Chemical mapping of a 177-nucleotide RNA with 2A3 and DMS. Source: RMDB libraries RFM100 and RFMREP, as collected in RNAgym. Values cover nucleotides 27 to 126. DMS adducts were read by reverse transcription with MarathonRT.
RNA sequence: GGGAACGACUCGAGUAGAGUCGAAAAAUACUACAACUCCGCUUCAAUAUAACUAUACUCUCGUAAAACGGCCUAAAAAUAUCGAAAUAUAUGGGGUAAAUACACGUUUGAAAAACGCUACGAUUCCAACGUGGAAUCAAUUCGUUGAUUCCACGUUAAAAGAAACAACAACAACAAC
Reactivity to 2A3 in 0.01 (KOAc 150mM, MgCl2 10mM, bicine 150mM(pH8.5), 24C), signal-to-noise 5, nucleotides 027 to 126: a000u040a040c050u070a070c060a160a070c040u020c030c010g020c030u060u040c050a120a030u090a020u000a220a020c030u020a030u070a160c020u010c020u020c050g080u090a000a010a070a040c010g050g000c000c000u080a140a120a050a050a020u170a050u110c070g040a030a160a000u130a000u050a070u140g030g000g020g000u050a090a080a030u170a020c080a000c040g020u000u030u060g130a110a040a020a040a000c000g010c040u040a020c050g090a120u060u000c030c020
Reactivity to DMS in 0.01 (KOAc 150mM, MgCl2 10mM, bicine 150mM(pH8.5), 24C), signal-to-noise 4, nucleotides 027 to 126: a060u010a070c060u020a090c090a130a090c060u030c030c040g000c060u000u010c050a050a040u010a060u030a130a060c090u000a060u000a100c040u000c020u000c030g000u010a070a050a060a100c060g000g000c050c040u010a030a050a070a090a050u010a030u010c080g010a050a060a070u010a060u000a050u030g000g000g000g000u010a030a050a080u010a050c140a060c040g000u010u000u000g010a040a050a060a060a030c040g020c120u000a040c110g000a180u010u000c010c030